[RMDB]
An RNA of 207 nucleotides, treated with 2A3 and read out base by base.
RNA sequence: GGGAACGACUCGAGUAGAGUCGAAAAACAGAAGGGUGAAAGUUCAAGCAAGCUAGCCGGCAAAAAAGCAAACUUGACCACCAAGGAUAAAAGAGAUCUUAUCCAAGGAUGCAAAAGAUAACCUCACAAAAGCUUCAUUCGUUCGCGAAUGAAGCAAGAUUUUCCACCAGUUCGCUGGUGGAAAAUCAAAAGAAACAACAACAACAAC
Reactivity to 2A3 in 0.01 (KOAc 150mM, MgCl2 10mM, bicine 150mM(pH8.5), 24C), signal-to-noise 1, nucleotides 027 to 156: a010c030a060g110a100a080g090g010g010u030g010a120a070a050g020u100u040c000a030a000g000c010a070a000g000c000u020a020g020c010c100g080g020c090a110a030a000a020a080a000g050c050a080a060a020c020u030u030g000a040c010c010a000c010c000a000a000g010g040a020u030a060a050a040a020g210a000g000a020u020c020u000u040a020u030c000c000a020a020g020g000a030u080g030c030a080a060a000a060g020a030u090a040a080c010c000u040c040a040c030a040a110a010a020g000c000u000u000c000a000u000u000c000g020u020u040c210g000c000g100a000a000u010g000a000a000g000c000a000a000
The reactions ran in a buffer of 150 mM KOAc, 10 mM MgCl2 and 150 mM bicine (pH 8.5), at 24 C.
It was measured as part of the RMDB library M2RFPK.